[RMDB]
RNA sequence: GGGAACGACUCGAGUAGAGUCGAAAACGUCGUGAACUAGCGACAAUGCCGUAGAUCUAUCGUUAUCUAACCGAAACAUCGUGACUAGUCGUAGAAUAGAACCAGGAGAGGACGCUGUCAAACAAAGACUAGGUCUCAGAUUCGUCUGAGGCCUAGUAAAAGAAACAACAACAACAAC
Reactivity to DMS in 0.01 (KOAc 150mM, MgCl2 10mM, bicine 150mM(pH8.5), 24C), signal-to-noise 9, nucleotides 027 to 126: c160g010u010c030g010u010g000a120a100c120u010a110g010c010g010a040c050a050a030u020g000c020c010g020u030a050g010a040u000c050u020a080u010c060g010u010u020a040u010c060u000a080a110c090c030g000a080a070a120c150a050u010c040g000u000g000a080c030u010a100g000u010c020g010u000a050g010a070a060u020a050g000a070a090c040c040a070g000g000a070g010a060g000g010a010c050g010c050u010g000u010c070a060a050a060c160a070a070a080g010
Reactivity to 2A3 in 0.01 (KOAc 150mM, MgCl2 10mM, bicine 150mM(pH8.5), 24C), signal-to-noise 9, nucleotides 027 to 126: c060g010u010c010g010u030g070a130a080c070u040a100g010c010g020a010c010a020a030u080g030c030c010g030u040a020g010a090u010c030u060a080u070c080g050u080u040a050u060c050u030a040a090c040c020g050a050a040a040c040a080u080c040g050u040g040a060c040u040a020g050u050c010g040u040a020g030a110a060u090a070g040a030a020c020c020a030g020g040a070g030a020g030g010a000c010g000c050u030g040u060c030a050a070a090c040a040a110a010g060